[RMDB]
RNA sequence: GGGAACGACUCGAGUAGAGUCGAAAACAUGAUUCGAGUGGAUAAUUUUCUUUGGGCGAUAUAUCUAUUGACUUUUAUCACGAUCAGCGCUAUUAUAGUAGUGUUGGUUGUCUUAAUACAGCGUCUCAGAUCGUACGUUUUUCGAAACGUACGAUCUAAAAGAAACAACAACAACAAC
Reactivity to 2A3 in 0.01 (KOAc 150mM, MgCl2 10mM, bicine 150mM(pH8.5), 24C), signal-to-noise 1, nucleotides 027 to 126: c020a050u110g040a060u170u050c070g030a030g030u060g010g040a020u040a110a110u090u180u020u000c000u100u030u060g010g000g010c050g060a050u060a020u010a050u190c100u080a120u040u100g010a040c040u160u170u010u040a020u030c000a010c000g000a000u000c000a000g000c010g000c020u020a040u270u100a220u090a180g070u000a010g000u020g000u020u000g010g000u010u000g000u000c020u020u060a040a060u140a020c060a030g050c030g050u030c010u020c030
Reactivity to DMS in 0.01 (KOAc 150mM, MgCl2 10mM, bicine 150mM(pH8.5), 24C), signal-to-noise 2, nucleotides 027 to 126: c050a100u000g000a090u010u000c110g000a100g000u000g010g000a050u010a030a070u010u000u010u010c050u010u000u000g010g020g040c120g020a050u000a060u020a070u000c070u010a100u000u010g000a060c100u000u000u010u000a010u010c080a050c020g010a000u000c010a000g030c020g010c000u000a000u000u020a120u010a170g020u000a010g010u000g020u010u000g000g020u000u000g000u000c040u000u000a030a020u020a100c190a040g000c090g020u000c030u000c130